[RMDB]
RNA sequence: GGGAACGACUCGAGUAGAGUCGAAAAACUACCUUCCCUGUGCUAUUCCAUCAGCCUACAGACCUGGUACCUGGAUUUUUGCCCGAGAUGAUUCCUACCACCUUACUACUGACGAAGACACCCAUUCGUGUCGUUAUUACUUCGGUAAUAACGACACAAAAGAAACAACAACAACAAC
Reactivity to DMS in 0.01 (KOAc 150mM, MgCl2 10mM, bicine 150mM(pH8.5), 24C), signal-to-noise 1, nucleotides 027 to 126: a030c170u030a110c050c040u010u000c020c010c020u020g010u000g050c040u000a050u000u020c050c030a060u010c010a080g000c050c010u000a040c110a080g010a140c050c030u000g000g010u000a010c040c050u010g010g010a020u000u010u000u010u010g020c040c020c030g020a070g010a020u010g030a160u000u000c010c040u000a030c030c020a050c020c040u010u000a100c060u000a010c050u020g000a090c070g000a040a050g000a070c100a080c030c020c040a200u020u000c110
Reactivity to 2A3 in 0.01 (KOAc 150mM, MgCl2 10mM, bicine 150mM(pH8.5), 24C), signal-to-noise 1, nucleotides 027 to 126: a010c070u080a060c010c000u010u000c020c000c010u020g050u080g000c030u060a070u060u030c020c010a050u010c050a030g030c010c020u090a050c060a020g060a100c030c030u060g040g010u020a040c000c010u000g070g070a090u080u030u000u050u100g020c000c000c000g030a050g000a030u050g000a000u090u020c030c000u060a040c050c000a050c030c010u010u100a070c040u040a020c020u010g030a050c000g010a040a050g040a000c040a050c020c050c000a030u160u050c060
Structure probing data (DMS and 2A3) for a 177-nucleotide construct.
High DMS reactivity at an A or C suggests that its Watson-Crick edge is free.
Reactivities are given for positions 27 through 126.
Source: RMDB library RFMREP, as collected in RNAgym.
2A3 adducts were read by reverse transcription with SuperScript II with manganese.